An RNA of 207 nucleotides, treated with DMS and 2A3 and read out base by base.
For 2A3, 4,693 sequencing reads were counted.
The reactions ran in a buffer of 150 mM KOAc, 10 mM MgCl2 and 150 mM bicine (pH 8.5), at 24 C.

[RMDB]
RNA sequence: GGGAACGACUCGAGUAGAGUCGAAAAGAACUUUGGCCGGCUCGGAAUAGAAUCAUGGGGUGCAAACUGCCCACUGGCAGAAAGGAUUAUAGCAAAUGCGUACCCUAUUGCAAUACAGCCCGGCCAACAUAGACUACUCUAUUCGUAGAGUAGUCAACAAUAAAUUGCUAUUCGUAGCAAUUUAUUGAAAAGAAACAACAACAACAAC
Reactivity to DMS in 0.01 (KOAc 150mM, MgCl2 10mM, bicine 150mM(pH8.5), 24C), signal-to-noise 3, nucleotides 027 to 156: g010a110a070c040u000u000u000g010g010c000c010g000g070c020u000c060g010g020a170a150u010a060g020a140a120u000c080a080u000g010g020g030g040u010g000c010a050a060a190c020u000g020c010c020c130a080c160u020g020g030c020a030g020a240a080a070g000g000a160u000u000a110u010a150g020c040a030a090a140u000g010c100g010u000a050c010c010c000u000a040u010u000g010c050a070a140u000a080c040a050g020c100c010c010g100g030c000c020a010a000c140a150u000a170g010a050c000u010a020c010u000c000u000a050u000u010c260g040u000a020g010a040g020u000a010g020u000c000a010a030
Reactivity to 2A3 in 0.01 (KOAc 150mM, MgCl2 10mM, bicine 150mM(pH8.5), 24C), signal-to-noise 6, nucleotides 027 to 156: g010a070a020c020u040u010u020g000g000c000c000g020g010c040u050c100g010g080a130a090u170a160g060a090a080u210c020a020u040g000g000g000g000u020g000c010a040a080a050c010u020g000c010c020c060a170c170u170g000g000c020a000g080a070a080a020g160g030a080u190u110a110u260a160g050c070a080a080a090u110g030c030g020u030a030c010c000c000u050a100u030u130g020c030a050a060u030a110c020a010g020c020c050c020g000g000c000c000a000a000c000a000u050a010g000a000c000u010a000c000u000c000u010a050u070u040c120g090u060a000g000a000g000u000a000g000u000c000a000a000